[RMDB]
RNA sequence: GGGAACGACUCGAGUAGAGUCGAAAAGAAAGAAAGAAAGAAAUCUGACAGAAUGACGGAUUGGAUCGUUGUGGUCGGCGGGCCACCACGUCAUUCCUUCGCACUGUCUCCGGGCAGACCGCCAUAAAAAAGCGGAUCUACUUCGGUAGAUCCGCAACCUUAGGAAACUCUUCGGAGUUUCCUAAGGAAAAGAAACAACAACAACAAC
Reactivity to 2A3 in 0.01 (KOAc 150mM, MgCl2 10mM, bicine 150mM(pH8.5), 24C), signal-to-noise 2, nucleotides 027 to 156: g030a020a060a000g050a050a080a020g080a060a080a010g090a030a160a050u120c100u070g010a010c020a020g130a160a170u080g040a040c030g030g000a030u040u110g040g020a060u200c010g010u010u020g010u000g030g010u020c040g040g060c100g080g000g020c000c000a000c000c000a000c000g020u010c010a020u050u040c000c020u030u060c010g030c020a040c020u000g010u010c020u010c050c050g000g000g000c020a030g030a110c010c040g000c030c020a070u230a040a100a020a020a010a000g000c000g010g000a000u000c000u000a000c000u030u020c090g050g000u010a010g000a010u000c000c000g010c010a010a010